[RMDB]
RNA sequence: GGGAACGACUCGAGUAGAGUCGAAAACAGGAGGAGUACGCCAUGCUAAUGUGCCUUGGAUGAUCCACAUCUCAGGGUCAGGCGCCGAUGAGCACAUUGAACUAUCCAUGUGGCUGAGAGCCCUCACGCCAGUUGGAGGCUUCGGCCUCCAACUGGCAAAAGAAACAACAACAACAAC
Reactivity to 2A3 in 0.01 (KOAc 150mM, MgCl2 10mM, bicine 150mM(pH8.5), 24C), signal-to-noise 2, nucleotides 027 to 126: c020a010g020g050a010g060g000a080g080u070a000c000g000c000c000a100u300g020c040u160a010a010u020g010u050g030c010c000u010u000g000g000a020u000g010a000u080c020c050a070c080a200u070c200u100c100a170g000g010g000u000c000a050g020g090c140g000c020c000g020a010u080g010a000g000c000a000c010a060u040u050g030a030a000c040u020a090u290c110c040a020u130g050u010g080g060c000u010g000a010g070a000g180c000c000c010u010c000a010c040
The record gives the reactivity of an RNA of 177 nucleotides to 2A3. Source: RMDB library OK1LIB, as collected in RNAgym. For 2A3, 620 sequencing reads were counted. Values cover nucleotides 27 to 126. Values are in units of 0.01, from 0 to 300, in steps of 10. Conditions: 150 mM KOAc, 10 mM MgCl2 and 150 mM bicine (pH 8.5), 24 C.